[RMDB]
RNA sequence: GGGAACGACUCGAGUAGAGUCGAAAAGCACCGAGACCAAGCCCGAAGAUGACACCUAAAGCAAGAACGAAAUACGCGGUGGUCAUGCUUCCCUGACCGCGGCGCGCCUUUUUCAAGAGGGACACACCCCACAGAAGCAGUAAGAGACCAACUGCCAGAUUCCUACGAGAUUCGUCUCGUAGGAAUCAAAAGAAACAACAACAACAAC
Reactivity to 2A3 in 0.01 (KOAc 150mM, MgCl2 10mM, bicine 150mM(pH8.5), 24C), signal-to-noise 1, nucleotides 027 to 156: g030c030a020c060c080g000a090g020a060c020c010a070a000g010c020c020c000g030a060a020g070a060u090g010a020c000a030c070c010u080a050a050a000g070c040a000a060g030a190a010c080g100a200a000a060u230a040c030g000c110g030g030u020g000g060u010c010a010u040g050c040u000u010c000c040c010u060g000a010c000c040g020c000g020g000c000g060c000g030c000c030u040u110u010u050u040c080a070a010g010a070g030g020g020a040c030a000c000a020c050c040c010c010a040c010a020g130a100a000g000c010a010g000u070a120a000g030a000g000a130c040c000a030a030c010u000g000c000c000a020
Chemical mapping of a 207-nucleotide RNA with 2A3. Reactivities are given for positions 27 through 156. The data come from the RNA Mapping Database (RMDB), library OK3TST. The RNA was probed in 150 mM KOAc, 10 mM MgCl2 and 150 mM bicine (pH 8.5) at 24 C.